[RMDB]
RNA sequence: GGGAACGACUCGAGUAGAGUCGAAAACUUAUUUCCAGGUCCAGAGGGAAUCUUGGGAAGCUCCAUGGUAGCUGUUAAUAGUAUAGGCCCUGUGGACACAAACUUUGCUAGUUUGAGAAAUCCAUCAUGAAGUUCGACUAUUCGUAGUCGAACUUCAAAAAGAAACAACAACAACAAC
Reactivity to DMS in 0.01 (KOAc 150mM, MgCl2 10mM, bicine 150mM(pH8.5), 24C), signal-to-noise 1, nucleotides 027 to 126: c050u000u000a180u000u000u000c000c050a080g030g000u000c000c000a060g040a060g010g010g000a120a040u010c040u000u020g000g020g000a120a030g000c020u000c020c150a150u010g010g020u030a050g010c080u000g040u020u020a190a240u000a070g010u020a210u050a070g000g010c000c010c000u000g030u000g000g000a020c050a240c040a020a030a020c030u000u020u010g020c220u000a050g010u010u000u010g010a160g000a050a070a110u010c020c040a050u000c170a110